[RMDB]
RNA sequence: GGGAACGACUCGAGUAGAGUCGAAAAGGCUUCAGCAGAGCGCAGAUACCAAAUACUGUUCUUCUAGUGUAGCCGUAGUUAGCCCACCACUUCAAGAACUCUGUAGCACCGCCUACAUACCUCGCUCAGUCCACAUGUUAUUCGUAACAUGUGGACUAAAAGAAACAACAACAACAAC
Reactivity to DMS in 0.01 (KOAc 150mM, MgCl2 10mM, bicine 150mM(pH8.5), 24C), signal-to-noise 4, nucleotides 027 to 126: g010g010c030u000u010c090a080g000c100a140g000a040g000c220g030c070a030g020a100u000a150c220c160a090a090a150u020a080c070u020g020u000u000c020u000u000c040u010a090g000u010g010u000a030g020c000c020g010u010a050g010u020u000a110g000c040c030c010a130c170c060a040c050u000u000c090a050a060g000a040a040c030u000c070u000g000u000a050g000c030a100c120c090g010c080c020u000a030c050a110u000a110c080c010u000c040g030c120u000c120
Reactivity to 2A3 in 0.01 (KOAc 150mM, MgCl2 10mM, bicine 150mM(pH8.5), 24C), signal-to-noise 3, nucleotides 027 to 126: g030g000c030u030u050c050a060g060c010a020g070a000g020c000g000c050a010g040a060u130a150c070c080a050a090a030u200a080c030u010g040u030u010c020u080u020c020u130a130g150u070g010u090a010g020c010c020g000u010a090g080u010u110a030g020c020c000c000a000c020c010a060c000u080u060c030a060a060g010a000a060c020u030c040u100g020u040a010g000c040a070c190c110g030c000c010u030a020c010a030u080a060c020c000u050c010g010c000u050c030

Background:
An RNA of 177 nucleotides, treated with DMS and 2A3 and read out base by base. Reactivities are rounded to 0.1 and cut off at 0 and 3. DMS adducts were read by reverse transcription with MarathonRT. Reactivities are given for positions 27 through 126. The RNA was probed in 150 mM KOAc, 10 mM MgCl2 and 150 mM bicine (pH 8.5) at 24 C.